[RMDB]
RNA sequence: GGGAACGACUCGAGUAGAGUCGAAAAGUAAUAGAUAGGUGGAUGACGAGAAAGGGUGCGCUGAUAUCCACUACGAAUGCUAGCAGUAAAAAGAAUAGCGCUCCUUAUACAACUAGCGACAAAAGGAUAAGGUAUCGUGAUGUCAAUCACAUUGCGACUGACCAUUUAAUUUCGAUUAAAUGGUCAGAAAAGAAACAACAACAACAAC
Reactivity to DMS in 0.01 (KOAc 150mM, MgCl2 10mM, bicine 150mM(pH8.5), 24C), signal-to-noise 2, nucleotides 027 to 156: g000u010a090a130u000a090g020a110u030a060g000g040u000g000g000a090u000g010a190c080g000a110g010a110a100a140g000g000g030u000g010c010g010c030u020g010a080u000a050u000c000c010a050c050u010a140c100g000a090a160u000g010c060u000a040g010c050a150g010u000a040a070a070a110a090g000a090a120u000a090g030c020g010c040u000c020c020u000u000a140u000a040c060a070a060c030u000a030g010c030g020a210c080a030a090a070a130g050g010a050u000a040a070g030g020u000a150u000c030g070u000g020a010u000g000u000c020a080a110u000c150a060c000a030u000u010g020c020g020a140
Reactivity to 2A3 in 0.01 (KOAc 150mM, MgCl2 10mM, bicine 150mM(pH8.5), 24C), signal-to-noise 4, nucleotides 027 to 156: g020u020a020a130u050a160g070a050u070a030g000g050u020g030g000a010u040g020a030c090g010a030g100a160a090a040g020g000g010u050g000c020g010c020u010g040a020u040a020u140c010c010a010c020u040a040c060g070a080a030u160g040c030u090a020g020c080a040g040u140a060a060a050a070a030g070a070a110u060a030g000c010g000c010u050c000c000u020u030a130u020a030c030a040a010c020u040a020g010c020g100a090c050a040a100a020a000g050g010a040u040a070a070g040g000u050a040u080c010g010u010g010a010u010g030u090c050a040a080u080c010a020c010a010u020u020g000c010g010a010